[RMDB]
RNA sequence: GGGAACGACUCGAGUAGAGUCGAAAAACGUAUGAUACGUCAUACGAACCCAAUAGCCCUUACUCCAGGUAGAUCCACCAGAACAUGAAGUUCAAGGUGGGUCUCCUGGAGAAAGGUCCUUUGGUAAGGUGCACUCGGGAUUCGUCCCGAGUGCACCAAAAGAAACAACAACAACAAC
Reactivity to 2A3 in 0.01 (KOAc 150mM, MgCl2 10mM, bicine 150mM(pH8.5), 24C), signal-to-noise 1, nucleotides 027 to 126: a000c040g000u000a000u000g010a040u080a060c170g110u120c050a010u000a000c000g000a120a080c000c000c030a010a010u100a050g050c000c000c000u050u130a170c000u000c000c000a000g060g000u010a000g020a000u000c000c000a000c000c000a020g010a010a020c070a120u300g130a300a030g000u030u000c070a110a140g000g000u000g000g000g000u010c000u000c000c000u000g000g000a000g000a000a000a000g040g000u030c000c000u100u000u080g180g030u200a100a030
This 177-nucleotide RNA was probed chemically with 2A3. For 2A3, 480 sequencing reads were counted. Reactivities are given for positions 27 through 126. The data come from the RNA Mapping Database (RMDB), library RFM100. Conditions: 150 mM KOAc, 10 mM MgCl2 and 150 mM bicine (pH 8.5), 24 C.